[RMDB]
RNA sequence: GGGAACGACUCGAGUAGAGUCGAAAAGGGUUAGCUCAAACGAAACACAGCUCGGCUCGUCGAAUCGGGCCAGCGGAGCACGAGGUAUCGACCGAUUUGAAGAUCCCGAUUCGUUAGAAAGGCGGCACCUGGCCGUAUCAUUCGUGAUACGGCCAGGAAAAGAAACAACAACAACAAC
Reactivity to 2A3 in 0.01 (KOAc 150mM, MgCl2 10mM, bicine 150mM(pH8.5), 24C), signal-to-noise 3, nucleotides 027 to 126: g030g000g050u120u100a000g060c030u050c060a160a170a000c120g040a080a070a020c040a030c000a110g020c010u030c070g050g000c020u000c000g150u070c160g070a020a020u230c000g000g000g000c000c000a000g020c020g010g050a030g070c000a000c070g110a050g080g040u100a050u130c040g090a170c040c000g020a090u040u040u250g010a010a000g010a070u090c040c000c000g010a040u080u020c040g040u040u000a060g020a120a120a000g120g010c030g000g010c000a020
Reactivity to DMS in 0.01 (KOAc 150mM, MgCl2 10mM, bicine 150mM(pH8.5), 24C), signal-to-noise 2, nucleotides 027 to 126: g000g000g000u010u040a020g000c020u030c010a060a030a050c060g050a170a060a110c050a100c140a210g010c030u010c100g080g000c000u000c030g000u020c180g010a060a000u000c010g000g010g000c050c010a010g000c010g000g010a100g010c090a140c160g000a060g020g030u010a150u000c070g000a140c060c000g010a100u000u000u000g020a070a060g000a030u030c000c000c020g000a110u010u010c000g030u010u030a090g010a060a110a110g010g000c040g000g000c110a300